The record gives the reactivity of an RNA of 177 nucleotides to 2A3. For 2A3, 486 sequencing reads were counted. Source: RMDB library OK1LIB, as collected in RNAgym.

[RMDB]
RNA sequence: GGGAACGACUCGAGUAGAGUCGAAAACUUGGCCGUAUUUUAUGCCGCGCGCACGAAGCGCAAUGGGCCGUCGGUAAGCUGCAGUAUUUUUUCGACAGGCUUAUGACCAACCUGAAAAACGGCGACCAGGUCGGCAGUACUUCGGUACUGCCGACCUAAAAGAAACAACAACAACAAC
Reactivity to 2A3 in 0.01 (KOAc 150mM, MgCl2 10mM, bicine 150mM(pH8.5), 24C), signal-to-noise 1, nucleotides 027 to 126: c000u050u040g040g000c000c000g040u000a270u030u130u080u060a140u140g010c010c040g000c000g000c000g000c020a050c150g160a260a060g030c000g000c070a000a040u140g080g000g000c020c000g000u000c010g000g010u000a020a020g000c010u010g020c020a200g100u070a300u020u300u000u000u070u170c070g080a020c050a100g040g020c000u000u000a020u030g000a020c000c000a030a020c010c010u050g090a110a000a000a000a000c010g000g000c000g000a020c020c010